The record gives the reactivity of an RNA of 170 nucleotides to DMS and 2A3.
In probing experiments dimethyl sulfate is read out at A N1 and C N3, which are open when not base-paired.
For DMS the reverse transcriptase was MarathonRT.
It was measured as part of the RMDB library 15KLIB.
As a SHAPE reagent, 2A3 marks flexible, mostly unpaired nucleotides at the ribose 2'-OH.

RNA sequence: GGGAACGACUCGAGUAGAGUCGAAAAACGCAGGGGACCAGUGGAGCCGUGGGAUGCUCUUCCCAAUCUGACCUGACCCCUCCCCCAGCGGGUCGCCCAGGAAUGGCGGGACCCCACUUCAGCAGGGCUACGGUACUCUUCGGAGUACCGAAAAGAAACAACAACAACAAC
Reactivity to DMS in 0.01 (KOAc 150mM, MgCl2 10mM, bicine 150mM(pH8.5), 24C), signal-to-noise 6, nucleotides 027 to 129: a070c090g030c090a060g020g010g000g030a070c120c050a090g030u030g020g010a000g070c050c000g000u070g010g010g000a060u000g020c090u020c130u080u000c030c010c010a100a060u060c050u030g060a140c060c010u050g030a030c040c010c020c030u040c030c000c000c020c030a050g010c160g020g000g040u010c020g020c030c000c020a050g020g120a090a050u030g000g000c140g000g000g000a030c040c000c000c060a040c020u010u000c000a020g030c010a050g020g020g050c100u020a040
Reactivity to 2A3 in 0.01 (KOAc 150mM, MgCl2 10mM, bicine 150mM(pH8.5), 24C), signal-to-noise 9, nucleotides 027 to 129: a000c070g000c060a020g010g020g010g020a100c090c010a030g010u100g070g060a020g050c040c060g100u110g010g040g010a020u100g050c040u030c000u110u040c000c000c000a010a060u040c040u060g070a100c020c000u010g060a090c010c000c000c000u030c010c010c000c000c000a020g060c110g030g000g010u020c030g120c030c010c010a050g090g090a150a110u120g030g000c050g010g040g040a030c010c000c010c010a050c020u120u090c030a030g010c010a020g030g030g030c020u050a030